[RMDB]
RNA sequence: GGGAACGACUCGAGUAGAGUCGAAAAAGAAACAAGAAAUAUGGCUCUGGAAGAAAAUAAGUUCAAAGGCUUUGGUGGUGAGACAUAUUUGCACAAGGUUCGGAGUUUGUAUGAUAGAAGCACCAAGCACUUAUAUGAUAUUCGUAUCAUAUAAGUGAAAAGAAACAACAACAACAAC
Reactivity to 2A3 in 0.01 (KOAc 150mM, MgCl2 10mM, bicine 150mM(pH8.5), 24C), signal-to-noise 3, nucleotides 027 to 126: a000g080a030a070a000c060a030a030g130a080a160a020u100a070u050g010g010c010u000c040u060g070g020a050a030g060a040a270a040a060u130a060a020g040u070u070c080a120a050a070g060g000c000u150u070u060g050g030u030g030g030u030g020a040g020a010c020a010u120a040u070u090u110g020c020a040c010a060a060g050g000u050u050c030g030g000a040g000u060u110u170g040u060a050u070g030a010u040a080g060a060a020g040c010a020c050c010a000a010g050
Reactivity to DMS in 0.01 (KOAc 150mM, MgCl2 10mM, bicine 150mM(pH8.5), 24C), signal-to-noise 6, nucleotides 027 to 126: a090g010a090a070a070c070a100a120g010a090a080a080u000a040u000g010g000c010u000c030u010g010g010a080a090g000a090a070a060a060u000a040a060g010u010u000c070a070a110a120g010g010c030u000u000u000g010g030u000g000g020u000g010a080g000a040c050a030u000a040u000u000u000g020c080a060c140a070a060g000g010u010u010c070g000g000a080g010u000u010u010g020u000a040u000g010a110u010a060g000a070a070g010c050a050c050c050a060a110g010

Notes:
An RNA of 177 nucleotides, treated with 2A3 and DMS and read out base by base. For 2A3, 3,080 sequencing reads were counted. Conditions: 150 mM KOAc, 10 mM MgCl2 and 150 mM bicine (pH 8.5), 24 C. Source: RMDB library OK2TST, as collected in RNAgym.